RNA sequence: GGGAACGACUCGAGUAGAGUCGAAAAGAUAUGGAAGUUCUACCCACCCUAGGGCAGCGAAGAACUCGGAAACGAGGGAGCUGCCCUAGGAGGAACUUCCUAAGUCAAACCAACGUUCGCGUUGGAAGACAUACCUUGUGUUCGCACAAGGUAUGUCAAAAGAAACAACAACAACAAC
Reactivity to DMS in 0.01 (KOAc 150mM, MgCl2 10mM, bicine 150mM(pH8.5), 24C), signal-to-noise 1, nucleotides 027 to 126: g060a060u000a140u020g000g020a010a010g010u000u010c000u010a130c000c000c000a300c040c020c000u020a030g000g000g010c000a010g000c000g010a120a240g000a170a210c000u020c000g030g000a120a100a220c000g000a020g000g000g000a020g000c020u000g000c000c000c020u000a000g000g020a030g000g000a060a000c020u000u000c000c000u000a000a040g020u000c060a060a110a130c000c000a010a000c000g010u010u010c150g080c000g010u010u000g020g000a070a060
The record gives the reactivity of an RNA of 177 nucleotides to DMS.
Reactivities are given for positions 27 through 126.
The reactions ran in a buffer of 150 mM KOAc, 10 mM MgCl2 and 150 mM bicine (pH 8.5), at 24 C.
DMS adducts were read by reverse transcription with MarathonRT.
The data come from the RNA Mapping Database (RMDB), library TTRDEL.
For DMS, 822 sequencing reads were counted.